[RMDB]
RNA sequence: GGGAACGACUCGAGUAGAGUCGAAAAGCUCCCACGUGAGUGGGAGCAUACCAUGUGAAUGGUAGAGCUCUGCAAAUCUAGUUCAGGGAGGAAAACCCGUAGAGCACUCUACUCCGUUAGAUCGAGAGAUCGAGGAGUAGUGUGAAUGAACAGAUUCACUACACUAGAUGUUCGCAUCUAGUGUAGUAAAAGAAACAACAACAACAAC
Reactivity to 2A3 in 0.01 (KOAc 150mM, MgCl2 10mM, bicine 150mM(pH8.5), 24C), signal-to-noise 2, nucleotides 027 to 156: g010c000u000c020c000c000a000c020g100u160g060a100g000u010g000g000g000a000g000c000a000u000a010c000c000a010u020g080u070g140a170a040u010g010g010u010a030g020a030g060c000u010c010u010g000c030a060a030a090u020c020u040a010g010u010u000c000a000g010g000g010a050g030g050a060a030a010a040c000c000c010g000u020a010g000a010g010c000a000c000u000c000u000a000c000u000c000c000g020u030u100a010g000a000u000c000g010a000g010a010g000a060u000c000g000a030g000g000a000g000u000a000g000u000g000u000g010a030a060u030g000a000a000c000a000g000a020u030u030c020
Reactivity to DMS in 0.01 (KOAc 150mM, MgCl2 10mM, bicine 150mM(pH8.5), 24C), signal-to-noise 2, nucleotides 027 to 156: g000c000u000c000c000c000a040c040g000u000g010a260g060u010g030g020g030a010g060c000a000u000a000c010c010a020u000g010u010g020a240a070u000g010g020u000a020g010a140g020c020u000c030u000g010c010a080a090a050u010c040u000a110g000u000u000c010a080g010g020g010a260g020g000a110a070a070a150c000c020c030g000u010a070g010a170g030c000a080c010u000c000u000a000c000u010c000c010g000u000u000a180g000a030u000c000g020a300g000a300g000a020u000c010g000a130g000g010a050g020u000a000g000u000g010u000g010a040a070u010g000a020a020c020a050g000a210u000u000c070
Source information: Chemical mapping of a 207-nucleotide RNA with 2A3 and DMS. The reactions ran in a buffer of 150 mM KOAc, 10 mM MgCl2 and 150 mM bicine (pH 8.5), at 24 C. The 2A3 profile rests on 3,057 reads. For DMS the reverse transcriptase was MarathonRT.